[RMDB]
RNA sequence: GGGAACGACUCGAGUAGAGUCGAAAAUUGAGGCGGAUGAGUUGCUAAGGCUGGACUACUCUUCUUCUUCGGGAGCCUGAGCGAUAAACUUAUGCUUGCAAGGGGAAUUUAUCGGCUAGUUAGCUAAGACUGCCUGCACAUUCGUGUGCGGGCGGUUAAAAGAAACAACAACAACAAC
Reactivity to 2A3 in 0.01 (KOAc 150mM, MgCl2 10mM, bicine 150mM(pH8.5), 24C), signal-to-noise 9, nucleotides 027 to 126: u100u130g030a030g020g020c040g030g010a040u040g030a060g070u100u070g020c020u040a060a030g040g000c020u030g020g040a040c010u030a030c010u030c000u050u010c010u030u000c000u030u050c090g040g020g010a000g000c000c010u000g000a000g000c030g030a050u060a060a020a000c000u010u010a010u040g000c000u000u030g090c010a020a030g010g000g010g020a020a020u050u100u060a130u120c000g020g000c010u010a030g110u090u060a010g000c010u030a090a010
Reactivity to DMS in 0.01 (KOAc 150mM, MgCl2 10mM, bicine 150mM(pH8.5), 24C), signal-to-noise 9, nucleotides 027 to 126: u030u020g000a070g000g010c030g010g000a050u010g000a080g020u010u010g010c030u010a040a070g010g010c000u000g010g010a100c060u010a070c060u010c050u000u010c020u010u010c030u000u010c120g000g000g000a050g010c020c020u000g000a040g010c020g010a090u040a060a080a140c060u010u010a040u010g000c010u000u000g010c050a040a050g000g010g000g000a070a020u030u030u020a060u010c050g000g000c020u000a100g010u010u010a060g010c020u000a080a230